Chemical mapping of a 207-nucleotide RNA with 2A3.

RNA sequence: GGGAACGACUCGAGUAGAGUCGAAAACAGCGAGAGGCGUAGGAGAGAGGGCCGCGGUGCUCUGGAGUAGAGGCUUCUUGCUUCGAAACACCAUCGAUCGUCCCUUCUUCUUUUACCUUCUCCUGGCUCUUCCGAUGAGACGCGACCGGUGGCAUCAGGUAGGUAUUUGGUUCGCCAAAUACCUACCAAAAGAAACAACAACAACAAC
Reactivity to 2A3 in 0.01 (KOAc 150mM, MgCl2 10mM, bicine 150mM(pH8.5), 24C), signal-to-noise 1, nucleotides 027 to 156: c050a010g050c100g060a010g010a010g020g020c150g020u010a000g010g030a010g000a000g000a000g000g010g010c000c020g090c010g060g000u000g000c000u020c000u020g000g000a000g020u000a000g000a000g000g000c020u180u070c120u170u300g000c010u000u010c020g000a010a010a010c000a010c160c000a000u010c010g050a300u030c000g000u010c000c000c000u020u040c040u030u030c010u020u010u010u000a000c010c000u000u020c000u000c000c000u010g000g030c000u050c000u090u020c030c020g060a110u170g030a040g020a040c040g010c040g060a070c040c070g030g030u050g000g070c030a070u050c080a050
It was measured as part of the RMDB library VIROID.